[RMDB]
RNA sequence: GGGAACGACUCGAGUAGAGUCGAAAAUUCCAUUGACCCACUGCUCGAGGACGUCCUCCCUGUCUCCUCGGUUCUUCUUCGAUCCGGACCGGCUCAUCUCGGCAAGGGGCGGCAGUCCUCAGUGCUCGCCGGCGUACCUUCGGGUACGCCAAAAGAAACAACAACAACAAC
Reactivity to DMS in 0.01 (KOAc 150mM, MgCl2 10mM, bicine 150mM(pH8.5), 24C), signal-to-noise 4, nucleotides 027 to 129: u040u050c200c090a120u000u000g000a080c020c050c120a130c070u030g040c040u050c070g040a000g060g000a090c000g010u010c110c040u000c000c010c030u050g050u010c050u040c030c070u020c050g000g080u050u010c080u060u020c130u080u010c150g010a120u090c030c080g040g030a110c090c040g000g030c070u010c060a060u020c020u040c060g040g020c000a040a020g050g030g060g000c110g030g050c090a090g050u030c000c000u100c050a070g020u030g010c020u010c000g020c000c000
Reactivity to 2A3 in 0.01 (KOAc 150mM, MgCl2 10mM, bicine 150mM(pH8.5), 24C), signal-to-noise 4, nucleotides 027 to 129: u120u010c040c010a030u030u140g060a050c010c020c030a080c050u050g000c000u040c090g000a010g020g050a100c010g020u050c030c000u030c000c000c000u030g040u000c060u010c010c010u080c000g000g030u010u000c020u110u020c020u080u110c100g070a060u040c050c070g050g030a060c000c020g000g010c000u020c040a110u030c040u040c010g030g000c020a040a100g010g000g000g000c000g020g010c020a030g000u010c000c000u050c010a010g000u010g050c020u040c070g010c010c050